[RMDB]
RNA sequence: GGGAACGACUCGAGUAGAGUCGAAAAGAUAUGGACACUCGUGAAGGCGAAGAACAACCUCGGAAACGAGGUUGGGAGCCUUACACGAGGUGUCCUAAGUCAAAACCCGCAAGUUCGCUUGCGGGAACUGCCUUACGUAGUUCGCUACGUAAGGCAGAAAAGAAACAACAACAACAAC
Reactivity to DMS in 0.01 (KOAc 150mM, MgCl2 10mM, bicine 150mM(pH8.5), 24C), signal-to-noise 2, nucleotides 027 to 126: g000a040u000a300u000g000g010a020c000a020c000u000c000g050u010g010a060a030g000g020c000g040a110a140g010a210a200c020a010a010c000c010u010c010g000g000a090a080a300c020g020a010g000g020u000u000g010g000g010a180g030c010c010u000u000a040c030a000c000g010a020g020g020u000g040u000c000c000u000a030a050g000u000c030a120a060a100a160c000c000c000g000c000a010a010g000u000u000c290g020c010u000u000g000c000g000g000g010a010a030
Reactivity to 2A3 in 0.01 (KOAc 150mM, MgCl2 10mM, bicine 150mM(pH8.5), 24C), signal-to-noise 2, nucleotides 027 to 126: g000a000u120a040u110g000g010a000c010a000c000u010c000g020u010g010a000a030g030g000c000g210a300a010g010a060a070c000a000a010c000c000u000c010g000g050a070a060a040c020g000a000g000g050u010u010g000g000g000a000g000c010c000u010u050a050c010a010c000g000a010g000g000u000g000u000c000c000u000a070a010g040u040c070a040a040a140a260c000c020c000g000c020a010a010g000u230u300c300g030c160u000u000g010c020g000g000g000a020a000